[RMDB]
RNA sequence: GGGAACGACUCGAGUAGAGUCGAAAAAGGUUAAAGAAGUUGGUUAGCAUUCGCGAAGCUGAUAACUGAAGCCCUGGUGAACGGCGGCCGUAACUAUAACGGUCCUAAGGUAGCGAAAUUCCUUGUCUAAGAUGCAGAGAUUCGUCUCUGCAUCUUAAAAAGAAACAACAACAACAAC
Reactivity to 2A3 in 0.01 (KOAc 150mM, MgCl2 10mM, bicine 150mM(pH8.5), 24C), signal-to-noise 1, nucleotides 027 to 126: a000g070g030u060u000a100a020a020g060a010a030g020u050u030g070g030u100u010a000g010c050a130u110u220c170g030c020g040a020a000g000c010u020g020a050u020a060a060c030u030g020a020a010g050c000c000c000u050g090g000u010g010a100a020c040g030g020c040g000g000c020c000g050u030a060a030c000u040a030u050a300a040c020g050g020u070c000c020u060a060a020g030g000u030a000g040c020g070a050a000a150u010u000c000c000u040u100g040u000c030
Reactivity to DMS in 0.01 (KOAc 150mM, MgCl2 10mM, bicine 150mM(pH8.5), 24C), signal-to-noise 4, nucleotides 027 to 126: a070g000g010u000u000a050a180a070g010a060a170g010u010u000g020g010u000u000a200g010c020a130u010u010c140g000c040g000a120a110g020c020u000g000a040u010a040a200c080u000g000a170a060g000c020c010c020u000g020g010u000g010a090a080c140g000g030c200g010g000c000c020g040u010a050a070c200u000a110u000a070a050c030g000g010u010c000c040u000a100a070g000g000u000a090g010c050g010a050a050a100u000u000c010c010u000u010g030u010c150

Structure probing data (2A3 and DMS) for a 177-nucleotide construct. The data come from the RNA Mapping Database (RMDB), library OK2TST. Values cover nucleotides 27 to 126. DMS adducts were read by reverse transcription with MarathonRT. For 2A3, 1,136 sequencing reads were counted.